[RMDB]
RNA sequence: GGGAACGACUCGAGUAGAGUCGAAAAUUCAGCGCAUUCGUGCGCUGAAAAGCUGUACAACGCAUGUACAGAAAACAAAACAAAAACAAAACAAAUAGCGUAGCAGGGUUCUUUUCGAAGAACCCAAAACUUGGAAUGAAUUCGUUCAUUCCAAGUUAAAAGAAACAACAACAACAAC
Reactivity to DMS in 0.01 (KOAc 150mM, MgCl2 10mM, bicine 150mM(pH8.5), 24C), signal-to-noise 3, nucleotides 027 to 126: u000u010c010a020g010c000g010c000a010u000u010c160g050u000g020c000g040c000u000g010a000a010a080a120g000c000u000g000u010a010c010a020a100c100g010c070a150u000g000u000a010c020a010g000a070a090a050a140c120a070a040a070a090c170a040a060a080a090a060c080a120a050a080a090c120a050a060a070u000a130g000c040g020u000a130g060c220a120g010g000g020u000u000c000u010u000u000u020c130g010a020a010g000a000a010c000c000c010a020a010
Reactivity to 2A3 in 0.01 (KOAc 150mM, MgCl2 10mM, bicine 150mM(pH8.5), 24C), signal-to-noise 2, nucleotides 027 to 126: u000u010c000a000g000c000g000c000a010u040u040c190g100u010g000c010g000c000u000g000a000a000a000a000g000c000u000g000u000a000c010a060a000c070g040c090a130u040g000u000a000c000a000g020a050a130a000a040c060a030a080a010a000c030a030a130a070a010a010c040a030a120a000a020c020a010a170a100u110a070g040c030g080u060a030g130c100a130g000g000g020u010u000c000u040u010u020u080c080g090a000a000g000a000a020c010c000c020a010a000